[RMDB]
RNA sequence: GGGAACGACUCGAGUAGAGUCGAAAAAAGGCUUCGGCCUUGGCUCCACCUUUGUGCACGUGGAGUCACCGAACUACCUGAAGAUGGUCCCAUUGGGACCAUAUUCAGGCGGUGACGUUGAAACGUGCACUCUGGUUGCGUGAGCAUUCGUGCUCAAGAUGAUUAAUUCUUUCGAGAAUUAAUCAUCAAAAGAAACAACAACAACAAC
Reactivity to 2A3 in 0.01 (KOAc 150mM, MgCl2 10mM, bicine 150mM(pH8.5), 24C), signal-to-noise 2, nucleotides 027 to 156: a010a020g040g000c050u070u100c260g150g000c010c000u010u020g050g010c010u020c010c010a010c000c000u010u010u010g010u000g000c000a000c000g000u010g010g030a020g000u000c010a000c000c000g050a120a080c070u140a070c140c000u010g010a010a010g020a010u010g000g000u010c010c010c030a220u290u300g010g000g000a000c000c000a000u010a010u010u000c000a000g000g000c000g000g000u000g000a000c020g120u190u050g020a030a010a010c000g000u000g000c000a000c000u000c000u000g010g000u030u140g070c100g100u140g010a010g000c000a010u050u100c220g090u070g010c000u010c020a020a050
Reactivity to DMS in 0.01 (KOAc 150mM, MgCl2 10mM, bicine 150mM(pH8.5), 24C), signal-to-noise 2, nucleotides 027 to 156: a020a000g020g040c010u000u000c300g080g000c010c000u000u000g020g020c030u000c000c010a070c050c010u000u000u010g020u000g000c010a050c010g030u000g020g010a240g000u000c010a000c010c000g010a160a240c040u010a140c000c010u010g010a010a030g010a010u000g000g000u010c000c070c010a300u010u000g050g050g010a030c000c000a000u000a000u000u000c010a010g000g020c000g010g010u010g000a030c000g010u000u010g000a110a190a020c010g000u000g000c000a000c010u010c030u000g010g010u000u010g020c000g010u000g000a000g010c010a080u000u000c180g010u010g010c010u000c020a050a300

An RNA of 207 nucleotides, treated with 2A3 and DMS and read out base by base. The reactions ran in a buffer of 150 mM KOAc, 10 mM MgCl2 and 150 mM bicine (pH 8.5), at 24 C. For 2A3 the reverse transcriptase was SuperScript II with manganese. Reactivities are rounded to 0.1 and cut off at 0 and 3. The DMS profile rests on 7,206 reads. DMS adducts were read by reverse transcription with MarathonRT. Values cover nucleotides 27 to 156.